[RMDB]
RNA sequence: GGGAACGACUCGAGUAGAGUCGAAAAUAUGUUUCAAAUUUGUUGGCAUAAAAUUAUUCAUGGCAUUUUCUUAUGAUUUUGAAACGCUAUGGUGUUUGUAGUCAAAUUCCUUUGGUUCCAAAUAUUGACUGUAAAGGAAUUUCGAUUCCUUUACAGUAAAAGAAACAACAACAACAAC
Reactivity to DMS in 0.01 (KOAc 150mM, MgCl2 10mM, bicine 150mM(pH8.5), 24C), signal-to-noise 5, nucleotides 027 to 126: u000a050u000g000u010u010u000c060a130a130a110u010u000u010g010u000u000g000g000c010a060u010a110a070a050a040u000u010a030u010u010c010a020u000g000g020c010a060u000u010u010u000c030u000u000a070u010g010a160u000u000u000u000g000a040a010a030c250g010c030u000a010u000g010g010u000g000u000u000u000g000u010a190g010u000c010a010a040a130u010u000c020c020u000u000u000g010g010u000u000c030c020a050a070a100u010a080u000u010g010
Reactivity to 2A3 in 0.01 (KOAc 150mM, MgCl2 10mM, bicine 150mM(pH8.5), 24C), signal-to-noise 2, nucleotides 027 to 126: u110a010u050g020u000u090u090c080a100a090a090u110u070u140g030u020u010g000g000c010a000u060a120a090a070a090u270u160a070u110u180c030a020u000g030g000c000a010u010u080u130u050c020u010u170a140u230g220a150u170u120u140u070g010a000a000a010c010g000c000u010a010u030g020g010u000g030u030u040u010g040u050a050g020u030c000a030a030a070u030u050c010c000u070u040u120g060g060u060u030c020c040a010a080a040u150a100u100u130g040